[RMDB]
The data come from the RNA Mapping Database (RMDB), library M2RFPK. Structure probing data (2A3 and DMS) for a 207-nucleotide construct. Reactivities are given for positions 27 through 156. 2A3 adducts were read by reverse transcription with SuperScript II with manganese. Conditions: 150 mM KOAc, 10 mM MgCl2 and 150 mM bicine (pH 8.5), 24 C. For DMS, 4,885 sequencing reads were counted.

RNA sequence: GGGAACGACUCGAGUAGAGUCGAAAAAGUUAGGUUCGCUAUGGUGCAACUCUUUAAGGCAAUAACGAACUAAUGCUAAGCAAGUAAUGGAGAAAUGCCAGGGUCACUAUCUAGCCAUAAUAGUGCUGUAAGUGACUUAGAUUCGUCUAAGUCACAACUUCUUAUGGACGUUCGCGUCCAUAAGAAGAAAAGAAACAACAACAACAAC
Reactivity to 2A3 in 0.01 (KOAc 150mM, MgCl2 10mM, bicine 150mM(pH8.5), 24C), signal-to-noise 6, nucleotides 027 to 156: a010g110u110u060a060g050g000u020u030c020g010c020u040a010u080g100g030u070g030c060a090a140c060u070c050u130u200u150a120a050g050g000c020a050a060u090a100a050c060g030a020a000c040u040a040a010u050g000c020u060a060a020g050c030a070a010g040u100a070a060u100g050g020a060g050a080a070a030u050g010c040c010a070g030g000g000u040c010a010c010u020a020u130c030u040a030g010c000c000a030u060a120a050u040a130g090u060g030c070u060g040u110a210a090g000u010g000a000c000u000u000a000g000a010u010u040c100g010u010c160u000a000a000g000u000c000a000c000a000a010
Reactivity to DMS in 0.01 (KOAc 150mM, MgCl2 10mM, bicine 150mM(pH8.5), 24C), signal-to-noise 2, nucleotides 027 to 156: a120g000u010u010a160g030g010u010u000c020g020c020u000a050u000g000g020u020g000c020a050a110c080u000c060u000u000u010a070a080g030g010c010a080a060u000a040a070c020g000a040a050c010u000a050a090u000g010c040u000a060a130g050c040a030a080g040u000a090a090u000g010g020a080g000a090a090a080u010g020c040c010a090g010g030g020u010c010a040c030u000a050u000c040u010a080g010c040c060a100u010a050a110u010a110g000u010g010c020u000g030u000a070a160g000u000g000a030c000u000u000a010g000a050u000u000c300g000u000c000u010a010a020g020u020c000a010c000a020a080